[RMDB]
RNA sequence: GGGAACGACUCGAGUAGAGUCGAAAAUCUGAAGGAAACUUGCAGGCGAGCCCAACGUGGUGGGGGGCCUUCCUCCCUCAGAGGCCAUGGGGUGAGAGGGGCUCAGGCAGCCAAGGAGGCCCAGGCGAUGGUUGAUACUCUUCGGAGUAUCAACCAUAAAAGAAACAACAACAACAAC
Reactivity to DMS in 0.01 (KOAc 150mM, MgCl2 10mM, bicine 150mM(pH8.5), 24C), signal-to-noise 2, nucleotides 027 to 126: u020c030u000g000a070a080g010g010a150a130a130c060u000u000g040c090a050g000g010c040g020a110g020c010c020c020a040a140c140g020u000g000g030u010g000g010g030g000g000g000c070c050u000u000c010c020u000c020c010c010u000c040a030g000a110g000g020c100c070a100u000g010g000g020g020u000g010a080g010a100g020g010g020g010c020u000c030a080g010g000c050a110g000c000c010a050a110g000g000a090g010g010c020c040c000a070g020g010c120g000